[RMDB]
RNA sequence: GGGAACGACUCGAGUAGAGUCGAAAACUGCAUCUGUGGAGGACGAAGCAUAUUUCUGUUUCUGGAGGAUUAUUUAUAAUCUGCCGGACAGUCUUGCAGGUGGCUGGGAUAUGUUCAGUCUGGUAGAAAAAUCAGGAGUCCUUCGGGACUCCUGAAACAAGAUACAUCCCUUCGGGGAUGUAUCUUGAAAAGAAACAACAACAACAAC
Reactivity to DMS in 0.01 (KOAc 150mM, MgCl2 10mM, bicine 150mM(pH8.5), 24C), signal-to-noise 1, nucleotides 027 to 156: c040u000g000c000a050u000c030u000g010u000g030g040a180g000g000a070c020g000a110a120g000c010a060u000a060u000u000u000c040u010g010u000u000u000c000u000g010g010a060g000g000a050u000u000a040u010u000u000a080u010a090a050u010c000u010g000c020c000g040g020a040c270a040g000u000c050u000u000g030c030a090g020g030u010g020g030c010u000g000g000g000a060u000a030u010g000u030u020c030a300g000u010c010u020g030g020u000a170g010a040a070a110a160a190u000c020a020g010g000a040g020u000c020c000u010u000c290g050g020g050a010c000u000c010c000u000g000a030a020a110
Reactivity to 2A3 in 0.01 (KOAc 150mM, MgCl2 10mM, bicine 150mM(pH8.5), 24C), signal-to-noise 1, nucleotides 027 to 156: c000u010g040c000a060u080c030u070g150u100g030g160a150g110g020a030c030g040a000a000g000c010a030u050a060u030u100u100c060u120g200u080u050u030c030u040g020g040a080g030g000a010u000u050a010u040u300u040a130u040a130a030u000c010u070g100c000c000g030g000a000c000a000g000u010c030u110u030g000c000a010g050g050u010g010g000c030u030g010g000g020a030u030a010u040g090u050u030c000a000g020u000c000u000g020g030u140a130g130a040a110a080a000a030u030c000a000g000g020a000g000u000c010c000u060u100c210g020g000g000a000c020u000c000c000u000g000a000a000a020
Annotation
Chemical mapping of a 207-nucleotide RNA with DMS and 2A3. The 2A3 profile rests on 538 reads. 2A3 adducts were read by reverse transcription with SuperScript II with manganese. The data come from the RNA Mapping Database (RMDB), library M2RFPK. As a SHAPE reagent, 2A3 marks flexible, mostly unpaired nucleotides at the ribose 2'-OH. Conditions: 150 mM KOAc, 10 mM MgCl2 and 150 mM bicine (pH 8.5), 24 C.